The record gives the reactivity of an RNA of 170 nucleotides to DMS and 2A3.
For DMS the reverse transcriptase was MarathonRT.
The reactions ran in a buffer of 150 mM KOAc, 10 mM MgCl2 and 150 mM bicine (pH 8.5), at 24 C.
RNA sequence: GGGAACGACUCGAGUAGAGUCGAAAAUUUAUUCACUGGGGUCGACAGCUCUGGGGAGAAAAGGGAGGAUCGGAUGGGAAGAGUAUAUCCCAUGGGAAUCCCUGGGUUCCCCUCGUGUCCAGCCCCUUCAGGGGCAACUUCGGUUGCCCCAAAAGAAACAACAACAACAAC
Reactivity to DMS in 0.01 (KOAc 150mM, MgCl2 10mM, bicine 150mM(pH8.5), 24C), signal-to-noise 6, nucleotides 027 to 129: u030u030u030a090u000u070c070a090c130u030g000g000g010g010u030c300g000a030c050a030g000c040u050c090u050g000g000g000g000a020g000a030a040a040a010g030g020g010a050g010g000a210u030c050g030g050a010u010g000g050g020a000a050g000a120g050u000a090u040a120u000c020c000c020a000u030g020g020g000a300a130u000c020c030c000u020g000g020g090u000u020c000c000c030c000u000c080g000u000g020u030c010c110a130g000c010c000c010c020u010u030c120a100
Reactivity to 2A3 in 0.01 (KOAc 150mM, MgCl2 10mM, bicine 150mM(pH8.5), 24C), signal-to-noise 5, nucleotides 027 to 129: u060u050u060a150u080u090c070a040c110u030g010g000g000g020u030c010g030a010c000a070g090c060u060c050u110g000g000g000g000a010g050a000a030a000a000g020g010g000a010g020g030a030u040c030g080g110a030u010g030g000g000a060a010g100a040g190u110a090u040a040u130c000c000c010a010u030g010g010g030a010a040u000c010c000c000u010g020g020g040u090u010c000c000c000c000u020c010g020u020g010u000c010c020a040g010c000c000c000c000u010u050c000a010